[RMDB]
RNA sequence: GGGAACGACUCGAGUAGAGUCGAAAAGAUAUGGAUCCUGUGUAGACAUGAUUGGCAUCGGAAACGAUGCACAAUCAACAGCUACCAGGAUCCUAAGUCAAAAGCACUUAGCUUCGGCUAAGUGCAACUUUAAUGUACGGUUCGCCGUACAUUAAAGAAAAGAAACAACAACAACAAC
Reactivity to 2A3 in 0.01 (KOAc 150mM, MgCl2 10mM, bicine 150mM(pH8.5), 24C), signal-to-noise 6, nucleotides 027 to 126: g000a000u010a010u040g000g000a010u010c000c000u060g100u130g010u150a010g040a090c210a300u190g000a010u000u010g000g000c000a000u000c010g000g010a000a010a000c000g000a000u010g010c020a020c010a020a000u000c000a040a070c140a050g000c000u000a000c000c000a000g020g000a000u000c000c000u000a000a000g000u000c000a000a000a040a180g020c000a010c010u010u000a000g000c000u070u090c300g170g000c000u010a010a000g000u000g020c000a000a000
Reactivity to DMS in 0.01 (KOAc 150mM, MgCl2 10mM, bicine 150mM(pH8.5), 24C), signal-to-noise 6, nucleotides 027 to 126: g010a020u000a030u000g000g000a010u000c000c000u000g000u010g020u000a000g000a060c140a100u020g000a030u000u000g000g000c000a000u000c000g020g000a010a010a030c000g010a020u000g010c000a040c010a000a010u000c000a070a080c220a150g000c000u000a010c000c000a010g010g000a010u000c000c000u000a000a060g000u010c000a100a120a130a120g000c000a000c000u000u000a000g000c000u000u010c270g030g000c000u000a000a000g010u000g010c000a010a010